Record summary
The data come from the RNA Mapping Database (RMDB), libraries RFM100 and RFMREP. Chemical mapping of a 177-nucleotide RNA with DMS and 2A3. For DMS the reverse transcriptase was MarathonRT. The RNA was probed in 150 mM KOAc, 10 mM MgCl2 and 150 mM bicine (pH 8.5) at 24 C.
[RMDB]
RNA sequence: GGGAACGACUCGAGUAGAGUCGAAAAAACGAGCCGAGGGGCAAUGUGGAAACGUCAGGACUGCGCAGUCCGGCAACAUCAGCAGAGAGCCCGCUAUACGUGACGGAUUGGCUGAAGCGUACAGAAAUGAUUUUCAAACUUUCGAGUUUGAAAAUCAAAAAGAAACAACAACAACAAC
Reactivity to DMS in 0.01 (KOAc 150mM, MgCl2 10mM, bicine 150mM(pH8.5), 24C), signal-to-noise 5, nucleotides 027 to 126: a070a050c090g000a090g000c040c030g000a070g000g000g000g020c010a080a030u010g020u000g000g000a030a070a050c080g010u000c250a190g030g000a030c020u030g020c180g010c130a080g000u010c020c010g000g000c240a070a050c090a050u010c100a280g000c040a010g000a090g000a070g020c030c000c030g000c050u000a100u010a060c040g010u000g010a180c050g000g020a210u010u000g000g000c020u000g020a090a140g010c040g020u000a020c080a040g010a130a060a120
Reactivity to 2A3 in 0.01 (KOAc 150mM, MgCl2 10mM, bicine 150mM(pH8.5), 24C), signal-to-noise 3, nucleotides 027 to 126: a000a000c090g000a030g010c030c010g010a070g040g000g010g030c030a060a060u120g010u040g060g040a060a040a000c010g020u030c080a100g000g020a030c020u040g070c250g000c160a000g000u000c000c000g000g000c000a040a010c020a080u070c020a010g050c020a010g060a000g010a020g110c000c000c000g000c010u040a020u050a010c040g010u040g000a020c030g020g020a040u080u090g100g020c040u010g000a020a000g030c020g030u080a020c010a030g080a030a080a060